An RNA of 177 nucleotides, treated with 2A3 and DMS and read out base by base. Reactivities are given for positions 27 through 126. DMS adducts were read by reverse transcription with MarathonRT. The data come from the RNA Mapping Database (RMDB), library OK1LIB.
RNA sequence: GGGAACGACUCGAGUAGAGUCGAAAAUGGGAAGCAGUCGGCCGACGACGACACACGGACGCACCAACACGCUUUGUGUUUUCUUCGCUCACUCAGAAAAGCCAACAAAGGAGGGGGCGUAGCAGCCAGGAUAAUAGCGUUUCGACGCUAUUAUCCUAAAAGAAACAACAACAACAAC
Reactivity to 2A3 in 0.01 (KOAc 150mM, MgCl2 10mM, bicine 150mM(pH8.5), 24C), signal-to-noise 5, nucleotides 027 to 126: u110g040g010g010a080a010g080c050a020g050u060c040g050g000c030c020g030a070c030g030a030c020g010a010c010a000c000a000c080g000g040a020c040g020c020a030c020c030a040a040c040a020c030g030c020u040u120u100g070u020g030u040u040u050u070c010u040u040c010g010c000u000c010a020c010u010c000a010g140a080a140a020a010g110c070c040a070a060c040a140a130a020g140g000a020g000g010g000g010g000c030g000u010a020g010c040a000g040c030c020
Reactivity to DMS in 0.01 (KOAc 150mM, MgCl2 10mM, bicine 150mM(pH8.5), 24C), signal-to-noise 4, nucleotides 027 to 126: u010g010g000g010a050a080g010c040a060g010u000c020g000g000c050c030g000a100c030g000a060c040g020a100c040a070c070a070c010g020g000a080c060g000c020a070c060c060a110a030c110a020c080g020c080u010u010u000g010u000g000u010u010u000u000c050u000u020c030g020c020u000c040a040c020u000c020a080g010a080a070a060a140g000c080c110a030a110c120a050a140a100g010g000a050g000g010g010g000g000c000g010u010a010g010c200a060g000c130c140